Description: Conditions: 150 mM KOAc, 10 mM MgCl2 and 150 mM bicine (pH 8.5), 24 C. This 177-nucleotide RNA was probed chemically with DMS and 2A3.
[RMDB]
RNA sequence: GGGAACGACUCGAGUAGAGUCGAAAACAUCAGAGACCUGUCUAACUUGACAAUAAACAUUGACAGAUUUGUGAUAGUCGGUAAGAUACAUGACAGCUGCACAGCAUCACUUCACGCGCUGUCAUCGUCCAAUGUCAUCUUUCGAGAUGACAUUGGAAAAAGAAACAACAACAACAAC
Reactivity to DMS in 0.01 (KOAc 150mM, MgCl2 10mM, bicine 150mM(pH8.5), 24C), signal-to-noise 5, nucleotides 027 to 126: c090a050u020c020a030g000a020g020a050c030c000u000g020u010c010u010a050a100c170u010u020g020a130c180a180a110u030a090a090a130c150a130u010u030g000a030c030a020g000a080u000u000u000g000u020g000a010u020a040g010u000c080g010g010u030a030a050g010a080u010a050c110a040u000g000a010c000a000g000c000u040g050c000a130c170a080g000c180a080u010c190a100c140u000u010c090a100c240g010c050g000c000u000g000u000c000a010u010c160g000
Reactivity to 2A3 in 0.01 (KOAc 150mM, MgCl2 10mM, bicine 150mM(pH8.5), 24C), signal-to-noise 7, nucleotides 027 to 126: c050a040u070c010a000g040a000g020a100c030c000u020g010u000c020u060a110a140c070u080u180g100a050c030a080a100u230a090a100a020c040a080u050u120g040a020c030a030g100a150u050u070u060g090u010g030a040u050a070g050u050c030g030g030u110a120a050g050a080u110a080c060a010u000g010a010c000a000g020c020u210g010c030a030c000a090g090c030a050u110c030a090c050u120u080c090a060c200g000c010g000c010u000g000u010c000a000u030c020g020
DMS adducts were read by reverse transcription with MarathonRT. 2A3 is a SHAPE reagent: it acylates the 2'-hydroxyl of flexible nucleotides of all four kinds. Source: RMDB library OK1LIB, as collected in RNAgym.